[RMDB]
RNA sequence: GGGAACGACUCGAGUAGAGUCGAAAAUAAAUGAGCGUACAGCACACUCAGACUGUACGCUAUCUGAGUGUGUCUACUUCAAAGUCCAACGACACACACAAGGCGUUGGAACAAGAGUGUGAGAAAAGCUGUUACCUCGAUUCGUCGAGGUAACAGCAAAAGAAACAACAACAACAAC
Reactivity to 2A3 in 0.01 (KOAc 150mM, MgCl2 10mM, bicine 150mM(pH8.5), 24C), signal-to-noise 1, nucleotides 027 to 126: u160a000a120a060u170g030a010g080c090g000u050a010c060a040g000c010a010c000a020c020u010c000a000g030a060c000u100g000u170a030c060g040c010u000a000u020c010u000g040a060g000u020g000u050g030u090c000u020a000c010u030u080c020a090a080a030g030u040c020c000a010a000c010g050a030c010a020c020a000c000a000c020a140a050g040g000c000g000u020u030g000g000a010a010c030a080a020g020a030g000u050g020u060g040a040g050a010a080a020a020
Reactivity to DMS in 0.01 (KOAc 150mM, MgCl2 10mM, bicine 150mM(pH8.5), 24C), signal-to-noise 1, nucleotides 027 to 126: u030a020a070a110u000g000a040g010c090g000u010a040c120a170g020c010a000c060a000c020u000c010a070g000a030c030u000g000u020a040c080g000c020u000a030u050c020u000g000a080g000u000g010u000g000u000c070u000a020c080u020u000c120a020a100a180g000u000c010c000a010a020c030g010a030c010a050c100a000c190a170c300a010a080g000g000c000g000u000u000g010g010a010a110c120a070a170g010a050g000u000g000u000g000a060g030a020a040a020a140

The data come from the RNA Mapping Database (RMDB), library M2PK90. The record gives the reactivity of an RNA of 177 nucleotides to 2A3 and DMS. Values are in units of 0.01, from 0 to 300, in steps of 10. The 2A3 profile rests on 1,350 reads. 2A3 adducts were read by reverse transcription with SuperScript II with manganese.